[RMDB]
RNA sequence: GGGAACGACUCGAGUAGAGUCGAAAACCGUUGCAUCCGGUCUCGACGGUGCUCGCCGCCUUGGUGGACUGCGCCCAGCGAGACGCACACGUUGAUUUGAUCGAGUCACUGAUGUCCGGUGAAGCGGCGAUUAGCGCGAGUUCGCUCGCGCUAAUCGAAAAGAAACAACAACAACAAC
Reactivity to 2A3 in 0.01 (KOAc 150mM, MgCl2 10mM, bicine 150mM(pH8.5), 24C), signal-to-noise 2, nucleotides 027 to 126: c000c000g010u000u090g010c020a010u020c010c010g050g010u010c000u020c000g050a050c020g060g000u020g000c000u000c020g090c060c000g070c060c070u040u100g040g000u040g100g130a300c150u170g110c010g030c000c020c000a010g090c000g030a020g010a060c080g030c000a030c020a040c090g070u060u110g040a100u050u040u150g060a060u190c050g020a000g070u070c000a000c080u070g040a070u010g060u040c020c000g000g010u040g000a060a030g040c000g020g030
Reactivity to DMS in 0.01 (KOAc 150mM, MgCl2 10mM, bicine 150mM(pH8.5), 24C), signal-to-noise 1, nucleotides 027 to 126: c050c000g000u050u020g010c080a100u040c120c020g000g000u000c060u000c000g000a090c290g000g000u000g000c000u060c080g050c090c020g080c080c140u000u080g080g000u000g000g020a100c030u000g000c150g000c000c000c000a140g010c030g020a060g000a000c140g000c070a050c080a170c090g040u000u000g000a040u000u090u010g000a030u000c110g000a000g010u050c080a140c120u010g000a100u060g000u090c160c020g030g140u030g000a080a080g080c010g000g000